[RMDB]
RNA sequence: GGGAACGACUCGAGUAGAGUCGAAAAGUCAGCCAUCCGGACAGAACCGUUCCUGUGAUGGUGUUACACUGCUGGGAGAGGAAUGUCUUGUCUUCAUCCGGUUGCCUGCGCCACUGUUCUGGUGGCGCAGCGCCGGUCAGUUCGCUGACCGGCGCUGAAAAGAAACAACAACAACAAC
Reactivity to 2A3 in 0.01 (KOAc 150mM, MgCl2 10mM, bicine 150mM(pH8.5), 24C), signal-to-noise 8, nucleotides 027 to 126: g050u030c030a000g020c000c010a010u000c010c000g000g020a010c000a050g180a170a130c090c080g070u160u060c030c030u130g110u190g050a040u030g010g010u000g000u020u020a030c040a010c020u040g000c010u040g000g020g010a030g010a010g060g060a050a050u130g130u200c110u180u220g070u020c000u050u050c010a090u020c010c010g010g000u020u060g060c000c010u010g000c010g000c000c000a010c010u020g110u260u080c060u100g030g000u000g000g000c000g000
Reactivity to DMS in 0.01 (KOAc 150mM, MgCl2 10mM, bicine 150mM(pH8.5), 24C), signal-to-noise 5, nucleotides 027 to 126: g000u000c170a220g000c050c020a040u010c010c040g000g000a040c030a110g010a140a150c230c170g000u020u000c000c020u030g030u020g020a030u000g010g010u000g010u020u010a090c100a120c040u010g000c030u000g000g000g000a050g010a060g000g000a040a040u020g010u020c140u010u020g000u000c030u000u010c000a070u000c000c000g020g010u010u000g010c060c000u000g010c000g010c000c000a020c000u000g000u010u020c160u010g000g010u000g000g000c000g010

Structure probing data (2A3 and DMS) for a 177-nucleotide construct. Values cover nucleotides 27 to 126. The RNA was probed in 150 mM KOAc, 10 mM MgCl2 and 150 mM bicine (pH 8.5) at 24 C. It was measured as part of the RMDB libraries RFM100 and RFMREP.